Structure probing data (DMS and 2A3) for a 177-nucleotide construct. For DMS the reverse transcriptase was MarathonRT. The reactions ran in a buffer of 150 mM KOAc, 10 mM MgCl2 and 150 mM bicine (pH 8.5), at 24 C. Values cover nucleotides 27 to 126. For 2A3, 5,497 sequencing reads were counted. It was measured as part of the RMDB library OK1LIB. The DMS profile rests on 13,931 reads.
RNA sequence: GGGAACGACUCGAGUAGAGUCGAAAAGCAAGCAGGAUCUUCGCGCACCGCGGUGCAAGAUCCGGCGCGUCGAAGUGCGUCUGCACCUCCAGCAUGAAUAGCGUGUGCGCGCGCGAUGAGUGGUCGAAUAAUCCACGUAGUUCGCUACGUGGAUUAUAAAAGAAACAACAACAACAAC
Reactivity to DMS in 0.01 (KOAc 150mM, MgCl2 10mM, bicine 150mM(pH8.5), 24C), signal-to-noise 5, nucleotides 027 to 126: g020c090a090a160g030c040a050g000g000a030u020c010u010u000c090g010c030g010c010a050c030c060g020c120g010g020u030g000c100a070a030g010a010u010c030c030g000g030c010g000c080g000u010c100g010a090a130g010u030g000c050g010u000c080u010g010c020a060c030c010u010c030c030a090g010c080a060u010g010a120a070u050a070g020c010g020u010g010u000g000c020g030c040g030c100g010c020g000a050u010g000a140g030u010g000g010u010c080g010a100
Reactivity to 2A3 in 0.01 (KOAc 150mM, MgCl2 10mM, bicine 150mM(pH8.5), 24C), signal-to-noise 6, nucleotides 027 to 126: g090c080a040a030g040c010a020g000g020a020u010c020u030u140c100g020c010g000c030a030c020c040g070c140g060g040u080g020c040a040a000g020a070u010c000c030g000g000c020g000c020g030u150c120g110a130a040g040u090g100c010g030u050c060u060g000c010a050c010c000u060c030c040a040g020c030a090u150g120a170a080u210a110g010c030g020u090g020u040g050c030g000c010g000c010g000c000g070a090u100g000a040g060u090g030g040u030c020g020a050